[RMDB]
Chemical mapping of a 207-nucleotide RNA with 2A3. 2A3 is a SHAPE reagent: it acylates the 2'-hydroxyl of flexible nucleotides of all four kinds.

RNA sequence: GGGAACGACUCGAGUAGAGUCGAAAAGCCAGGGUUCGCCCUGGCAAAAAGAUAUGGAUAGAUAAGACAGCAUUCCCAAUUCGUUGAUCUCGGAAACGAGGGAGAAUUGCAUGCAAUGACGUCUAUCCUAAGUCAAAAACGUGGAUUCGUCCACGAAUCACGCAUCACUGUUCGCAGUGAUGCGUGAAAAAGAAACAACAACAACAAC
Reactivity to 2A3 in 0.01 (KOAc 150mM, MgCl2 10mM, bicine 150mM(pH8.5), 24C), signal-to-noise 2, nucleotides 027 to 156: g000c010c000a000g000g000g000u080u210c260g190c000c000c010u020g000g040c000a020a020a000a000a000g010a000u050a000u090g000g000a000u000a020g040a000u030a090a150g130a100c030a100g200c000a080u080u090c080c000c000a000a000u000u000c030g300u300u010g000a010u000c000u000c010g030g040a030a050a100c010g000a000g000g020g000a030g000a000a000u000u000g020c030a010u000g000c010a050a290u170g050a030c090g020u020c000u000a000u000c020c000u010a060a040g030u020c060a010a020a040a170a160c050g000u010g000g000a010u040u090c240g000u000c110c010a030c010g020a010a080
Source information: Reactivities are given for positions 27 through 156.